[RMDB]
RNA sequence: GGGAACGACUCGAGUAGAGUCGAAAAGCCCAGUACUUCGGUACUGGGCAAAACCUUUGUGUCGCCAUGACAGCUUGGAUUUAGCUCGCCCAUUGGGCGAGCUUGUCAGCUGGAGUGGGCGACACUCUGGUAAAACGUCGAACCUUCGGGUUCGACGGGGAUUAUCUGGUUUCGACCAGAUAAUCCCAAAAGAAACAACAACAACAAC
Reactivity to 2A3 in 0.01 (KOAc 150mM, MgCl2 10mM, bicine 150mM(pH8.5), 24C), signal-to-noise 2, nucleotides 027 to 156: g000c000c000c000a000g010u000a020c010u000u130c200g160g010u000a000c020u050g030g020g000c020a000a000a000a000c010c000u000u060u010g000u000g000u000c010g000c010c020a020u090g010a060c000a000g000c000u100u160g160g010a040u210u210u130a000g020c000u000c010g000c010c050c240a300u220u300g020g000g000c060g020a020g000c000u010u010g000u000c000a000g020c000u000g020g000a040g040u140g060g070g020c000g000a000c000a000c000u000c000u000g000g010u020a090a110a050a000c000g000u000c000g000a000a000c010c000u070u090c240g110g000g000u000u000c010g000a000c020g000